[RMDB]
RNA sequence: GGGAACGACUCGAGUAGAGUCGAAAAUAUUGAGUAACAUUACAGGAGGAAAUUAUAUUCAUGAUAGCUGUUAAUUGGAACACACAAGAAGAUAUGACGAAUAUGUUUUGGAGACAAAAUAUAUCUCUCCGGUAUAUAUUUUCGAAUAUAUACCGGAAAAAGAAACAACAACAACAAC
Reactivity to DMS in 0.01 (KOAc 150mM, MgCl2 10mM, bicine 150mM(pH8.5), 24C), signal-to-noise 3, nucleotides 027 to 126: u010a030u010u010g000a250g000u010a040a240c030a020u020u010a040c050a020g000g020a120g000g000a070a030a120u010u000a040u000a040u000u000c030a060u010g010a100u010a050g000c060u000g000u000u010a050a060u060u030g000g000a080a060c040a050c120a110c150a050a030g010a080a060g010a020u000a020u020g000a130c070g010a100a030u010a020u000g000u000u000u010u000g000g000a200g000a110c010a010a030a030a010u000a020u000a040u030c040u000c070
Reactivity to 2A3 in 0.01 (KOAc 150mM, MgCl2 10mM, bicine 150mM(pH8.5), 24C), signal-to-noise 4, nucleotides 027 to 126: u180a010u060u170g030a060g050u040a050a010c010a040u010u070a010c030a020g020g080a040g030g080a200a050a060u240u090a100u070a040u130u130c040a030u120g100a110u060a070g060c070u030g030u140u100a080a030u170u080g080g020a090a020c070a000c000a010c050a090a070g120a030a060g000a090u000a020u070g040a040c090g000a100a010u030a020u090g020u000u040u010u020g020g000a100g010a020c010a010a040a010a000u040a010u000a060u000c040u000c000
The record gives the reactivity of an RNA of 177 nucleotides to DMS and 2A3. The RNA was probed in 150 mM KOAc, 10 mM MgCl2 and 150 mM bicine (pH 8.5) at 24 C. Source: RMDB library OK1LIB, as collected in RNAgym. DMS adducts were read by reverse transcription with MarathonRT.